[RMDB]
RNA sequence: GGGAACGACUCGAGUAGAGUCGAAAAGCGGAGGAAGCAACUCCCGUAAGGGAGCCAUCGCCUAAAGGGGCAACCCUUGAACCGCAGCAGUGUUAUUCACAAGGAAUCGGUCUGCGCUGGGGUCACACGGUUCAGGCUUAAAUUACGUGAAUCGCUUGAUAUUAUCUCUGUUCGCAGAGAUAAUAUCAAAAGAAACAACAACAACAAC
Reactivity to 2A3 in 0.01 (KOAc 150mM, MgCl2 10mM, bicine 150mM(pH8.5), 24C), signal-to-noise 2, nucleotides 027 to 156: g000c000g000g010a000g010g000a010a030g000c030a020a060c000u000c020c000c000g040u110a090a190g000g010g000a000g030c000c000a010u010c010g010c000c000u010a010a000a000g020g000g010g030c030a100a130c000c000c000u000u000g010a010a000c000c040g000c000a000g000c040a030g020u090g040u130u140a040u000u030c010a000c010a090a090g130g040a100a050u060c030g020g030u010c020u010g000c020g000c020u040g020g000g030g100u170c080a030c020a010c160g010g000u000u020c010a000g000g000c000u050u110a060a140a080u120u100a040c050g010u010g030a010a030u050c020g030c070u000u030
Reactivity to DMS in 0.01 (KOAc 150mM, MgCl2 10mM, bicine 150mM(pH8.5), 24C), signal-to-noise 1, nucleotides 027 to 156: g020c010g110g000a050g040g020a080a050g020c010a210a040c000u000c000c000c000g030u000a120a190g040g010g030a040g000c000c020a120u000c220g010c020c000u000a130a030a030g040g040g040g020c250a030a060c010c000c010u000u010g020a060a190c010c000g020c000a140g000c040a190g010u000g020u000u000a100u000u010c040a080c070a070a170g020g000a080a030u010c030g010g020u010c000u000g000c050g020c010u000g020g010g020g000u010c160a110c100a030c020g010g060u010u000c010a030g000g040c000u000u000a080a070a020u010u010a040c100g030u010g000a030a070u010c010g000c080u000u000